This 207-nucleotide RNA was probed chemically with 2A3. Reactivities are given for positions 27 through 156. The 2A3 profile rests on 1,256 reads. 2A3 adducts were read by reverse transcription with SuperScript II with manganese. It was measured as part of the RMDB library OK3TST.
RNA sequence: GGGAACGACUCGAGUAGAGUCGAAAAGCAACCCCACCUAGGAGAGGAGAGGCCAUGGGUGGCAAUGAAUAUGAACUCACACUCUCUCAGCUCCAUGGGCCUGCGGAAGCAGAACUCAGGAAGGAAGCAGCAGAUGUGGAAGUAUCCCUGAGCUUCACCUGGAUCCAUAGUUCGCUAUGGAUCCAGGAAAAGAAACAACAACAACAAC
Reactivity to 2A3 in 0.01 (KOAc 150mM, MgCl2 10mM, bicine 150mM(pH8.5), 24C), signal-to-noise 2, nucleotides 027 to 156: g020c010a010a170c000c000c020c010a030c020c000u070a060g020g000a050g000a010g090g030a030g000a010g030g010c080c120a050u070g000g000g030u080g020g080c090a070a110u270g090a080a030u280a050u190g020a030a000c000u020c020a030c000a010c060u030c000u000c000u000c050a030g020c000u000c000c050a100u090g000g000g020c010c030u020g030c010g000g040a040a010g030c010a030g000a070a040c030u010c050a020g060g020a110a020g030g010a030a020g030c030a020g010c030a020g010a130u070g040u090g030g030a130a000g040u040a060u030c050c000c000u020g020a020g050c030u060u020c030a030
The reactions ran in a buffer of 150 mM KOAc, 10 mM MgCl2 and 150 mM bicine (pH 8.5), at 24 C.